[RMDB]
RNA sequence: GGGAACGACUCGAGUAGAGUCGAAAAGGGGCCACCGCCGCGUGAGGUGCUGGAAGGACCCAUCUUGGCAGUCUCCCGCCAGACCAAGGCCAACAUCCCUGGGGCCCCCGAACGCAAGUCGUUCGCAGAAUAACUAGCAGUUCGCUGCUAGUUAUUCAAAAGAAACAACAACAACAAC
Reactivity to DMS in 0.01 (KOAc 150mM, MgCl2 10mM, bicine 150mM(pH8.5), 24C), signal-to-noise 7, nucleotides 027 to 126: g000g000g030g030c020c010a070c080c070g010c050c050g020c300g010u000g020a160g000g010u000g010c040u010g000g010a100a070g000g010a080c090c010c040a090u010c080u010u000g020g010c110a090g010u000c050u000c020c030c080g000c020c030a060g000a190c200c030a060a180g010g010c040c050a060a100c150a120u010c010c010c020u010g010g010g000g000c010c000c010c010c060g000a050a030c020g000c030a130a080g010u010c000g010u000u000c000g010c220a110
Reactivity to 2A3 in 0.01 (KOAc 150mM, MgCl2 10mM, bicine 150mM(pH8.5), 24C), signal-to-noise 5, nucleotides 027 to 126: g010g010g000g020c020c020a160c110c080g020c010c010g050c060g050u060g040a070g020g020u080g120c080u050g020g030a090a060g060g020a030c030c000c000a050u090c110u130u150g030g010c080a050g030u000c030u020c010c020c010g010c010c000a000g010a010c020c000a070a030g010g010c020c000a030a040c020a130u070c030c010c000u030g010g010g020g000c000c000c020c000c010g010a010a000c010g010c100a190a050g070u250c000g000u010u010c000g000c020a010